The record gives the reactivity of an RNA of 177 nucleotides to DMS and 2A3. Source: RMDB library OK2TST, as collected in RNAgym.
[RMDB]
RNA sequence: GGGAACGACUCGAGUAGAGUCGAAAAAUAUGAUUAAAGUUAAGGCUGCUUAUCGUAUCAUUAUAUUGCUGUGCAUAUUGCUCUCCCAUUAGGAAGAGUAUUCCUCACUAAUGAGAUGCUAGAAUGACCAUGAUAAUGCUUUCGAGCAUUAUCAUGGAAAAGAAACAACAACAACAAC
Reactivity to DMS in 0.01 (KOAc 150mM, MgCl2 10mM, bicine 150mM(pH8.5), 24C), signal-to-noise 4, nucleotides 027 to 126: a060u000a020u000g000a070u010u010a060a060a100g020u000u000a070a070g010g020c120u010g010c040u000u010a030u000c050g010u000a070u000c090a050u000u010a060u000a080u000u000g000c070u010g020u010g020c050a050u010a060u000u000g010c010u000c070u000c010c000c020a130u000u000a060g010g010a050a040g010a040g010u000a130u000u010c080c000u010c070a080c090u000a030a070u000g000a050g000a050u010g010c060u000a110g000a090a050u000g010a250
Reactivity to 2A3 in 0.01 (KOAc 150mM, MgCl2 10mM, bicine 150mM(pH8.5), 24C), signal-to-noise 4, nucleotides 027 to 126: a010u060a030u040g030a020u040u160a190a040a010g040u030u070a050a020g110g030c060u050g000c030u170u030a030u090c040g040u050a030u060c020a020u070u140a070u030a020u150u160g040c050u060g040u050g040c020a030u040a050u070u140g010c010u000c000u000c010c020c000a020u030u110a030g050g020a080a140g000a030g020u060a070u030u090c010c000u000c000a030c040u050a020a060u060g030a050g010a050u040g020c010u040a040g050a190a080u110g020a070
For 2A3, 4,125 sequencing reads were counted. For 2A3 the reverse transcriptase was SuperScript II with manganese. For DMS the reverse transcriptase was MarathonRT. DMS (dimethyl sulfate) methylates the pairing face of unpaired adenines and cytosines. The RNA was probed in 150 mM KOAc, 10 mM MgCl2 and 150 mM bicine (pH 8.5) at 24 C.